[RMDB]
RNA sequence: GGGAACGACUCGAGUAGAGUCGAAAAUACGCGAGGUUCGCCUCGCGUAAAAGAGGAGCGUAAACGUGAGCGUACGUAGUGCUGUACAUCGUUCCUACUCGAAUGCACAUGGUUUCGACCAUGUGAACAUACGACAAUUCUUCGGAAUUGUCGUAUGAAAAGAAACAACAACAACAAC
Reactivity to 2A3 in 0.01 (KOAc 150mM, MgCl2 10mM, bicine 150mM(pH8.5), 24C), signal-to-noise 8, nucleotides 027 to 126: u050a000c000g000c010g000a000g000g030u050u100c190g050c050c000u000c000g000c000g000u000a000a000a000a010g110a020g000g020a010g010c030g040u150a080a080a090c070g020u060g070a040g060c050g050u100a040c070g070u110a060g080u080g100c020u050g060u090a020c010a050u030c010g000u030u020c010c000u020a100c040u040c030g130a130a040u190g030c010a010c000a000u000g000g040u040u080u090c200g050a020c010c000a000u000g000u000g000a000a000
Reactivity to DMS in 0.01 (KOAc 150mM, MgCl2 10mM, bicine 150mM(pH8.5), 24C), signal-to-noise 8, nucleotides 027 to 126: u000a010c000g010c000g010a010g010g020u000u020c240g010c000c000u000c000g020c000g000u000a000a020a090a100g010a080g010g010a050g010c020g020u010a050a080a080c140g000u000g010a100g020c130g010u010a060c130g010u000a100g020u010g010c030u000g010u010a060c090a100u000c010g010u010u000c000c000u000a070c110u010c060g010a080a110u000g010c000a010c000a010u000g000g000u000u010u010c170g010a020c000c000a010u000g000u000g000a050a150
Source information:
The record gives the reactivity of an RNA of 177 nucleotides to 2A3 and DMS. For DMS, 13,459 sequencing reads were counted. 2A3 adducts were read by reverse transcription with SuperScript II with manganese. For DMS the reverse transcriptase was MarathonRT. The RNA was probed in 150 mM KOAc, 10 mM MgCl2 and 150 mM bicine (pH 8.5) at 24 C.